[RMDB]
RNA sequence: GGGAACGACUCGAGUAGAGUCGAAAAGGGGGACGGAUGAACACCUCGAAGGACACCAGCGCGCUGACCGGGUUGCCGGGAAGGGUGACGAUCGGCGUACCUGCCACCCGCCCGACGCCCUGGGGCAAGCAGUGAAGAUCUUCGGAUCUUCACUGCUAAAAGAAACAACAACAACAAC
Reactivity to DMS in 0.01 (KOAc 150mM, MgCl2 10mM, bicine 150mM(pH8.5), 24C), signal-to-noise 1, nucleotides 027 to 126: g000g000g000g000g000a060c090g000g000a120u000g000a270a000c120a100c010c000u000c050g000a000a010g000g010a130c030a110c010c080a060g000c040g000c100g000c000u010g000a170c080c000g040g020g080u000u020g110c010c000g000g000g020a110a040g000g020g000u030g010a070c130g020a160u020c030g010g000c110g020u010a100c000c050u000g050c010c000a040c000c050c000g000c000c000c000g000a020c050g000c040c000c000u000g020g000g050g000c150a110
Reactivity to 2A3 in 0.01 (KOAc 150mM, MgCl2 10mM, bicine 150mM(pH8.5), 24C), signal-to-noise 2, nucleotides 027 to 126: g030g000g010g000g020a030c040g020g070a030u090g030a110a030c010a090c050c010u000c020g040a030a040g050g000a020c020a010c040c010a020g040c030g000c010g000c030u040g090a060c020c030g000g000g050u020u300g000c000c010g030g020g000a100a170g060g020g020u110g010a020c030g100a130u100c020g010g000c040g040u080a150c000c010u070g030c000c010a000c030c000c000g040c010c000c000g020a010c000g000c000c030c030u060g020g040g050g010c090a050